[RMDB]
Structure probing data (DMS and 2A3) for a 170-nucleotide construct. The DMS profile rests on 12,128 reads. Conditions: 150 mM KOAc, 10 mM MgCl2 and 150 mM bicine (pH 8.5), 24 C.
RNA sequence: GGGAACGACUCGAGUAGAGUCGAAAACCCCUCCGGGCGCUCCCCUCGGAUCUCCGCCGGGUGGGUUCACAUCCCCAACCCGCGGGCCGGCUGUUCUUCUUUUCCUUUGCUCGUCUUCCCCGGUCAGUCAGCAAUCUCUUCGGAGAUUGCAAAAGAAACAACAACAACAAC
Reactivity to DMS in 0.01 (KOAc 150mM, MgCl2 10mM, bicine 150mM(pH8.5), 24C), signal-to-noise 5, nucleotides 027 to 129: c040c020c030c090u010c040c020g060g000g040c080g000c070u000c020c010c010c070u000c070g030g040a140u030c060u020c020c040g070c120c100g010g070g070u010g020g010g030u050u060c210a100c260a170u000c130c010c010c080a060a100c050c010c020g060c000g000g000g000c020c050g040g010c090u050g020u080u000c040u040u000c000u010u010u000u010c040c020u050u050u020g040c040u020c040g030u030c000u030u020c000c010c010c030g010g010u020c070a060g010u040c150a110
Reactivity to 2A3 in 0.01 (KOAc 150mM, MgCl2 10mM, bicine 150mM(pH8.5), 24C), signal-to-noise 5, nucleotides 027 to 129: c000c000c000c000u020c020c020g000g010g010c080g010c040u040c000c020c010c000u010c010g030g000a070u060c070u020c020c010g090c020c030g000g000g010u040g020g000g010u090u170c130a080c000a130u110c010c010c010c010a050a200c020c000c000g030c000g020g000g010c010c000g040g000c050u060g060u060u030c000u050u000c000u010u010u020u020c000c000u010u060u030g010c010u000c020g020u010c010u010u010c000c010c010c010g010g080u070c030a030g050u050c030a020